RNA sequence: GGGAACGACUCGAGUAGAGUCGAAAAAACUCAGCUAGGGAGAGUAUAACAUUCAUGUUAACGAGACCUAGACGAAACACAGAGGAAAAUUAUUAAUCACUGGAUAGUAUUAGUAAUGACUCUGUGUAAAACUCUUCUACGUUCGCGUAGAAGAGAACGCAGAAUAUUCCUUCGGGAAUAUUCUGCGAAAAGAAACAACAACAACAAC
Reactivity to 2A3 in 0.01 (KOAc 150mM, MgCl2 10mM, bicine 150mM(pH8.5), 24C), signal-to-noise 1, nucleotides 027 to 156: a000a000c050u040c000a000g010c030u000a000g020g010g000a090g020a100g070u100a180u050a300a010c040a020u120u240c100a020u300g020u030u020a050a020c060g000a040g090a060c000c000u020a030g020a030c020g020a000a030a000c010a000c000a000g010a020g000g020a090a140a070a070u000u010a000u000u000a000a000u010c020a010c040u020g130g110a150u300a300g020u000a000u000u010a000g020u000a010a010u020g020a000c000u000c000u030g010u010g020u010a000a000a000a000c010u030c000u000u000c010u000a000c000g010u030u030c150g000c010g010u000a000g000a000a000g010a000g000a020a000

An RNA of 207 nucleotides, treated with 2A3 and read out base by base. Conditions: 150 mM KOAc, 10 mM MgCl2 and 150 mM bicine (pH 8.5), 24 C. Source: RMDB library M2RFPK, as collected in RNAgym.